Source: RMDB library OK2TRN, as collected in RNAgym. This 177-nucleotide RNA was probed chemically with DMS and 2A3. In probing experiments dimethyl sulfate is read out at A N1 and C N3, which are open when not base-paired. The RNA was probed in 150 mM KOAc, 10 mM MgCl2 and 150 mM bicine (pH 8.5) at 24 C. For DMS the reverse transcriptase was MarathonRT.
RNA sequence: GGGAACGACUCGAGUAGAGUCGAAAAAUGCAUCGUACGGCAUUACGUAUACGGCAUCGUAAUAUGCUAUAUAAUUAUAGCUACGGCGCGCCGUAUAGCAUUAGCAUGCUAGCUAGCCGCGUACGGCCCCGACCAUCUUGUUCGCAAGAUGGUCGGGAAAAGAAACAACAACAACAAC
Reactivity to DMS in 0.01 (KOAc 150mM, MgCl2 10mM, bicine 150mM(pH8.5), 24C), signal-to-noise 2, nucleotides 027 to 126: a010u000g010c020a100u030c000g020u000a000c010g000g000c010a020u000u000a110c220g000u000a080u000a000c010g010g000c020a060u000c000g010u000a030a040u000a090u000g020c010u000a000u000a000u030a150a210u010u000a000u000a010g000c000u010a300c300g010g000c130g000c300g000c000c010g020u000a020u010a000g000c170a070u000u000a030g000c040a110u030g030c170u000a180g000c010u000a030g020c150c160g000c010g000u000a000c010g000g000c280
Reactivity to 2A3 in 0.01 (KOAc 150mM, MgCl2 10mM, bicine 150mM(pH8.5), 24C), signal-to-noise 1, nucleotides 027 to 126: a010u030g000c040a050u010c010g060u020a020c040g000g050c010a030u090u170a070c030g090u100a020u000a060c000g010g000c020a030u050c040g000u030a010a050u120a080u140g000c000u000a010u010a030u010a140a300u300u000a020u000a010g010c000u010a000c020g010g000c000g010c010g000c050c000g030u020a000u000a010g000c000a050u050u000a030g010c020a010u210g090c020u010a070g010c000u030a020g020c070c030g120c020g000u000a000c050g000g000c030

Record summary:
Values are in units of 0.01, from 0 to 300, in steps of 10.